[RMDB]
The data come from the RNA Mapping Database (RMDB), library TTRDES. This 177-nucleotide RNA was probed chemically with DMS. DMS adducts were read by reverse transcription with MarathonRT. The DMS profile rests on 625 reads.
RNA sequence: GGGAACGACUCGAGUAGAGUCGAAAAAGAUAUGGACCCUAGACAUGACCGAAACAUGACGAAGAACUAAGCUCGGAAACGAGCUUAGGGAGUCAUGUAGUAGGUCAACAGCUAGGGUCCUAAGUCAUCCUACGCAGCAGUUCGCUGCUGCGUAGGAAAAAGAAACAACAACAACAAC
Reactivity to DMS in 0.01 (KOAc 150mM, MgCl2 10mM, bicine 150mM(pH8.5), 24C), signal-to-noise 1, nucleotides 027 to 126: a010g000a000u000a300u000g030g010a030c020c000c000u000a050g090a040c160a260u000g000a000c000c000g050a150a300a190c000a000u000g000a020c080g020a150a190g000a090a270c000u000a050a000g000c000u000c000g030g000a080a070a150c000g020a020g000c000u000u000a060g000g000g000a020g000u000c000a000u000g000u000a000g000u000a110g000g000u000c000a020a090c300a110g000c000u000a000g000g030g010u000c000c000u000a000a100g000u010c070a100